Source: RMDB library OK3TST, as collected in RNAgym. Chemical mapping of a 207-nucleotide RNA with 2A3 and DMS.
RNA sequence: GGGAACGACUCGAGUAGAGUCGAAAAUGCUACACGCUUUUAAACAACCAGAUCUCGUGAUAACUCACUCACUAUCACAAAAAUAGCACGGGGGAAGUCCAUCUCCAAGAUCCAGUUACCCCCAACCAAGACCCACCUCCAACAUUGGGGAUUACAAAUCCUCUCAUGUAUUCGUACAUGAGAGGAUAAAAGAAACAACAACAACAAC
Reactivity to 2A3 in 0.01 (KOAc 150mM, MgCl2 10mM, bicine 150mM(pH8.5), 24C), signal-to-noise 4, nucleotides 027 to 156: u070g000c010u080a090c070a050c170g060c020u070u040u070u160a170a210a070c130a040a050c010c040a020g020a110u040c080u080c130g020u030g000a030u020a100a040c010u030c090a080c010u030c060a070c040u030a020u040c000a010c060a100a130a020a080a070u080a050g060c070a020c110g030g020g000g020g000a020a020g030u020c050c020a060u030c040u000c030c020a010a030g020a040u050c060c040a040g020u040u090a120c000c000c020c010c000a010a010c010c010a030a010g040a050c010c030c010a040c030c000u010c010c030a060a060c010a120u040u130g020g010g020g000a010u030u180a020c050a010a190
Reactivity to DMS in 0.01 (KOAc 150mM, MgCl2 10mM, bicine 150mM(pH8.5), 24C), signal-to-noise 1, nucleotides 027 to 156: u000g010c030u030a100c100a210c070g020c030u090u000u000u020a060a130a180c010a040a090c060c000a110g020a080u000c040u000c090g000u030g020a120u000a040a100c000u000c040a130c070u000c050a170c030u040a020u010c010a170c040a100a190a130a080a080u000a070g050c000a040c080g020g000g020g010g020a070a090g010u000c060c020a110u010c000u000c020c020a020a070g000a040u000c020c030a030g010u000u050a240c000c010c000c070c030a060a100c070c010a050a040g000a070c030c000c080a150c100c040u000c030c020a040a060c050a170u000u000g030g000g000g000a090u000u040a070c070a070a060

Description:
For DMS the reverse transcriptase was MarathonRT. Conditions: 150 mM KOAc, 10 mM MgCl2 and 150 mM bicine (pH 8.5), 24 C.